[RMDB]
Structure probing data (2A3 and DMS) for a 177-nucleotide construct. For 2A3 the reverse transcriptase was SuperScript II with manganese. DMS adducts were read by reverse transcription with MarathonRT. Conditions: 150 mM KOAc, 10 mM MgCl2 and 150 mM bicine (pH 8.5), 24 C. It was measured as part of the RMDB libraries RFM100 and RFMREP.

RNA sequence: GGGAACGACUCGAGUAGAGUCGAAAAGAGUACAUAUCGACCCGGGGGCUUGCUACCUCGAUGUCGGCUCUCCCCAUCCUGGCCGUGCAGCAGCGGCCAAGGGUGAGGUUGUUCGCCUAUUAAAGGGUGAUUUACUCAUCUUCGGAUGAGUAAAUCAAAAAGAAACAACAACAACAAC
Reactivity to 2A3 in 0.01 (KOAc 150mM, MgCl2 10mM, bicine 150mM(pH8.5), 24C), signal-to-noise 4, nucleotides 027 to 126: g010a020g050u080a060c120a090u300a100u150c040g010a020c010c010c040g000g000g000g010g030c120u170u110g030c080u190a060c010c010u010c000g090a080u170g010u010c000g010g010c010u000c000u010c010c000c000c000a000u000c000c000u010g000g000c000c000g000u090g030c120a220g030c100a020g000c130g000g000c020c000a000a030g010g000g000u010g000a070g070g040u010u020g010u000u030c050g020c020c000u050a100u260u210a260a090a030g030g000g000
Reactivity to DMS in 0.01 (KOAc 150mM, MgCl2 10mM, bicine 150mM(pH8.5), 24C), signal-to-noise 3, nucleotides 027 to 126: g010a040g000u010a110c230a140u050a120u010c030g010a030c000c270c030g010g000g000g010g020c080u040u000g020c110u030a070c050c010u000c000g010a040u010g000u000c010g000g020c030u030c010u010c000c000c000c020a000u020c000c010u000g000g000c020c000g010u010g020c150a190g030c150a150g000c020g000g000c000c010a000a020g000g000g010u000g000a110g010g030u000u000g020u000u030c040g010c010c000u000a140u030u020a100a150a150g000g010g000